Background: Source: RMDB library OK3TST, as collected in RNAgym. The record gives the reactivity of an RNA of 207 nucleotides to 2A3.

[RMDB]
RNA sequence: GGGAACGACUCGAGUAGAGUCGAAAAUGUCAGUACCUUAAUAGUACUACUAUGUGUAUACCUCAUAAUAUGCGUGUUUUACAUCUUGGUGCAGGUUCUGACAAGGGUGUAGCACCAGGCACUUCUGUUUUGAGACGUUGGCUUCCUAGUGAUGCCGCGGGCGUUACUUAUUCGUAAGUAACGCCCGAAAAGAAACAACAACAACAAC
Reactivity to 2A3 in 0.01 (KOAc 150mM, MgCl2 10mM, bicine 150mM(pH8.5), 24C), signal-to-noise 1, nucleotides 027 to 156: u060g000u000c030a010g000u040a000c000c040u120u150a170a100u150a290g030u000a030c000u000a000c000u010a080u080g060u010g010u000a010u060a130c050c010u070c040a080u130a230a040u110a300u260g030c020g030u120g000u040u110u030u050a080c040a010u040c070u060u100g000g030u010g010c030a010g010g070u040u030c000u000g020a020c000a020a030g110g020g030u040g010u020a030g040c030a000c000c000a020g060g090c010a000c000u160u060c030u100g040u000u000u020u070g090a090g010a050c070g060u060u040g010g000c020u070u000c000c010u010a040g040u040g260a010u000g000c000c000g000